[RMDB]
RNA sequence: GGGAACGACUCGAGUAGAGUCGAAAAUUUCUCAUCGACGACGGAAGGUAGCGGUGAGGGCUUCCGGCAAAAAUGAUGAGUCAUCGAUCCAGCGUGGCUGCAAUGACAACAACAACAAUAAUAAUAAAAAUGCCGGAUAUUUCGAUAUCCGGCAUUUAAAAGAAACAACAACAACAAC
Reactivity to DMS in 0.01 (KOAc 150mM, MgCl2 10mM, bicine 150mM(pH8.5), 24C), signal-to-noise 2, nucleotides 027 to 126: u000u100u070c030u000c030a070u010c020g050a060c060g000a090c000g030g070a090a030g000g020u000a120g000c040g000g000u000g000a030g020g000g020c060u000u000c020c000g000g000c150a010a090a040a060a090u020g000a030u010g000a160g000u010c020a100u000c040g010a210u000c130c030a100g040c070g020u000g000g000c000u000g000c080a160a140u020g000a080c060a110a050c080a130a090c100a100a100c200a080a090u000a030a080u030a100a180u010a030a110
Reactivity to 2A3 in 0.01 (KOAc 150mM, MgCl2 10mM, bicine 150mM(pH8.5), 24C), signal-to-noise 1, nucleotides 027 to 126: u000u000u020c000u000c000a040u000c000g150a180c000g000a000c000g040g100a200a020g020g000u200a050g050c050g010g060u100g110a040g000g030g000c000u020u000c000c000g000g050c090a030a040a000a000a170u240g000a020u000g000a000g060u110c040a000u130c000g060a060u020c000c070a000g000c010g040u080g020g010c050u010g000c000a020a150u000g020a110c020a050a000c000a060a000c020a020a060c110a030a000u210a180a020u100a090a010u080a140a150